[RMDB]
RNA sequence: GGGAACGACUCGAGUAGAGUCGAAAAGAUAAACGCCACGAUGAGUUCGAUCUCGCCAUACUGGAGAAAGCAUGGAACCAGCUUAUCGCACGCCACGAUAUGUUGCGCAUGGUGGUUGAUGCCGACGAGGAUCUAGUCUGUUCGCAGACUAGAUCCUAAAAGAAACAACAACAACAAC
Reactivity to 2A3 in 0.01 (KOAc 150mM, MgCl2 10mM, bicine 150mM(pH8.5), 24C), signal-to-noise 1, nucleotides 027 to 126: g050a010u130a040a140a000c000g000c000c070a020c090g030a090u110g020a010g010u090u070c050g040a160u060c040u040c050g040c000c000a030u020a100c010u060g000g060a010g090a100a170a000g100c040a040u070g040g080a000a040c010c000a000g080c000u010u080a040u090c070g000c060a050c040g090c010c010a050c050g020a030u040a010u170g130u110u150g040c090g020c030a050u120g060g050u010g010g010u060u040g010a030u090g000c030c010g030a070c060g090
Reactivity to DMS in 0.01 (KOAc 150mM, MgCl2 10mM, bicine 150mM(pH8.5), 24C), signal-to-noise 2, nucleotides 027 to 126: g020a130u000a040a050a120c100g020c000c060a020c040g010a060u000g020a190g010u010u000c060g020a050u000c060u000c060g020c060c010a020u000a050c060u020g000g020a120g050a110a060a110g010c040a010u000g000g060a040a170c080c000a070g000c020u000u030a040u000c010g010c090a020c110g000c080c080a030c010g000a060u000a020u000g020u000u000g010c130g030c040a080u020g040g060u010g010g010u000u020g010a070u000g000c040c030g020a180c190g020